Notes
This 177-nucleotide RNA was probed chemically with 2A3.
RNA sequence: GGGAACGACUCGAGUAGAGUCGAAAAUUAUUCAACACACUAACCUAAUUUCCGAGACAUUUUACAUGCCUGAAACAUGUCUUAGAAAUUAUGGUUUUUCUUGGUUUGUGUGCUGAACAAAGUAGAUCUCCCUCUGAUACUUCGGUAUCAGAGGGAGAAAAGAAACAACAACAACAAC
Reactivity to 2A3 in 0.01 (KOAc 150mM, MgCl2 10mM, bicine 150mM(pH8.5), 24C), signal-to-noise 3, nucleotides 027 to 126: u070u020a050u010u000c000a000a010c000a000c000a000c000u040a000a010c000c000u000a010a000u000u000u000c020c000g000a000g010a000c000a000u000u000u080u130a170c070a030u230g210c010c140u160g050a040a030a010c050a050u000g010u000c000u000u000a000g010a010a040a000u000u000a050u090g030g030u000u020u010u130u080c030u030u130g050g030u000u000u030g000u010g000u000g000c000u000g010a010a000c050a100a110a000g080u140a050g010a090u000
Values cover nucleotides 27 to 126.